[RMDB]
RNA sequence: GGGAACGACUCGAGUAGAGUCGAAAAGUCAGGCAGCCUGCAGGCGUGGUGCUGGGGGCUCCGUCCUCGUAGCAUCGCUGGCUCUAGGCUCAGGGCCAGGAGGUUUGCCAGGGGCCGCAGCCCCACAGUCAUGAUCGAGGUUCGCCUCGAUCAUGACAAAAGAAACAACAACAACAAC
Reactivity to DMS in 0.01 (KOAc 150mM, MgCl2 10mM, bicine 150mM(pH8.5), 24C), signal-to-noise 1, nucleotides 027 to 126: g020u000c080a200g040g040c030a030g020c010c010u000g000c070a060g010g020c030g010u010g050g000u000g020c010u010g030g000g000g020g010c010u010c160c110g020u000c000c020u000c030g010u010a130g010c000a010u010c010g000c010u000g000g000c000u000c000u000a130g000g000c130u010c150a110g010g000g000c030c000a040g030g010a080g020g000u020u000u000g000c040c080a180g000g000g000g020c010c070g010c230a080g000c020c000c000c040a050c130a040
Reactivity to 2A3 in 0.01 (KOAc 150mM, MgCl2 10mM, bicine 150mM(pH8.5), 24C), signal-to-noise 1, nucleotides 027 to 126: g120u060c080a040g000g030c020a040g100c010c000u090g090c020a090g060g010c030g050u020g030g020u050g010c030u030g000g050g000g000g050c050u130c070c030g130u180c000c010u000c020g170u160a010g030c010a040u040c010g010c080u000g000g040c000u020c020u000a100g100g100c100u100c110a010g010g000g010c000c010a010g010g060a030g150g000u110u260u230g020c060c030a030g030g000g000g000c060c070g070c030a020g050c000c000c000c000a010c020a010